Structure probing data (DMS and 2A3) for a 177-nucleotide construct. The 2A3 profile rests on 45,224 reads. The reactions ran in a buffer of 150 mM KOAc, 10 mM MgCl2 and 150 mM bicine (pH 8.5), at 24 C. It was measured as part of the RMDB library TTRDES.
[RMDB]
RNA sequence: GGGAACGACUCGAGUAGAGUCGAAAAGAUAUGGAUAUUCGAGGGAGUUAGUCGUCGGAAACGACGAUAACAUCGAUCUCGAUAUCCUAAGUCAAAACAUGCUCAACUUCUUCGGAAGUUGAGCAUGGUUACCAUUUAGGUUCGCCUAAAUGGUAACAAAAGAAACAACAACAACAAC
Reactivity to DMS in 0.01 (KOAc 150mM, MgCl2 10mM, bicine 150mM(pH8.5), 24C), signal-to-noise 9, nucleotides 027 to 126: g010a020u000a300u010g000g000a010u000a010u010u010c010g010a020g010g010g010a150g030u000u010a110g030u000c000g020u000c000g010g000a050a050a140c000g010a010c000g020a030u000a010a060c080a180u010c300g000a120u010c000u000c000g010a030u000a010u000c000c000u000a020a080g000u000c020a120a070a120a300c010a010u000g000c000u000c000a000a010c000u000u000c000u000u010c240g010g010a020a010g000u000u000g010a000g000c000a000u000g000
Reactivity to 2A3 in 0.01 (KOAc 150mM, MgCl2 10mM, bicine 150mM(pH8.5), 24C), signal-to-noise 8, nucleotides 027 to 126: g010a010u040a030u080g000g000a010u010a050u120u300c030g000a000g020g080g030a240g040u020u040a090g190u090c000g010u000c000g020g000a030a040a050c000g010a000c000g000a000u010a000a000c000a140u300c120g090a180u020c000u000c000g000a000u000a000u000c000c000u010a040a010g030u010c030a000a030a120a160c010a010u000g000c000u000c000a000a010c000u020u020c000u070u090c260g190g000a010a000g000u000u000g000a000g000c000a000u000g000